[RMDB]
Source: RMDB library M2PK50, as collected in RNAgym. An RNA of 177 nucleotides, treated with DMS and 2A3 and read out base by base.
RNA sequence: GGGAACGACUCGAGUAGAGUCGAAAAUCUGCAAUCUUCGGAUUGCAGAAAAUACGGAUCCAUACGGAUCCAUACGGAUCCAUACGGAUGCAUACGGAUCCAAAACGUACCUCUUCGGAGGUACGAACUGUAAAGACAGCUUCGGCUGUCUUUACAGAAAAGAAACAACAACAACAAC
Reactivity to DMS in 0.01 (KOAc 150mM, MgCl2 10mM, bicine 150mM(pH8.5), 24C), signal-to-noise 1, nucleotides 027 to 126: u000c000u000g000c000a000a000u000c000u000u000c280g000g000a010u000u010g000c000a030g020a010a010a020a090u000a080c130g010g010a200u000c000c000a110u010a050c190g010g010a010u000c000c000a070u010a060c160g000g010a010u000c010c000a150u010a040c100g000g000a030u000g000c010a140u000a060c120g000g030a090u010c020c020a080a010a130a180c010g000u000a000c000c000u000c020u000u020c110g000g030a000g000g000u000a000c020g000a020a050
Reactivity to 2A3 in 0.01 (KOAc 150mM, MgCl2 10mM, bicine 150mM(pH8.5), 24C), signal-to-noise 1, nucleotides 027 to 126: u000c010u010g010c020a010a020u010c000u020u020c120g130g000a010u000u000g000c000a000g000a000a000a010a000u100a020c030g000g010a010u000c010c020a010u080a150c050g000g010a010u020c000c000a000u100a020c060g000g010a000u010c000c000a000u060a080c110g100g080a020u120g090c040a060u060a100c020g000g000a010u010c020c030a010a050a030a000c020g020u000a010c000c020u010c000u000u070c250g130g000a010g000g000u010a000c010g000a000a010
For DMS, 826 sequencing reads were counted. For DMS the reverse transcriptase was MarathonRT.